[RMDB]
RNA sequence: GGGAACGACUCGAGUAGAGUCGAAAACCGUAUCGGUUCGCCGAUACGGAAAAGUUAAUGCUGCUAACACUCAUCUUAAGCAUGGCGGUGGUAUCGCUGGUGGGACUCCCCAGUUCGCUGGGGAGAACAUCGGAUCUAGGUUCGCCUAGAUCCGAUGAAAAGAAACAACAACAACAAC
Reactivity to DMS in 0.01 (KOAc 150mM, MgCl2 10mM, bicine 150mM(pH8.5), 24C), signal-to-noise 2, nucleotides 027 to 126: c000c000g030u000a000u010c000g020g010u000u000c210g020c000c000g010a010u000a010c010g010g000a010a030a070a090g030u000u000a070a060u000g010c010u010g010c060u010a080a100c090a080c060u000c040a080u010c050u000u010a080a090g010c070a030u000g010g000c040g020g010u010g010g010u010a070u000c050g010c040u000g000g030u000g020g000g000a300c010u000c000c000c000c000a020g000u010u000c160g010c000u000g000g000g000g010a000g000a030a080
Reactivity to 2A3 in 0.01 (KOAc 150mM, MgCl2 10mM, bicine 150mM(pH8.5), 24C), signal-to-noise 2, nucleotides 027 to 126: c010c010g020u010a000u000c000g010g020u030u060c160g060c050c010g010a010u000a010c010g010g020a050a100a010a010g060u070u130a090a050u110g030c040u020g030c040u040a070a010c060a030c050u050c030a100u000c040u090u090a060a000g030c030a030u050g010g000c030g000g060u040g060g080u070a040u090c040g010c040u020g020g020u040g020g030g060a060c000u000c010c000c010c000a020g020u020u070c140g020c040u000g000g000g000g000a010g010a000a000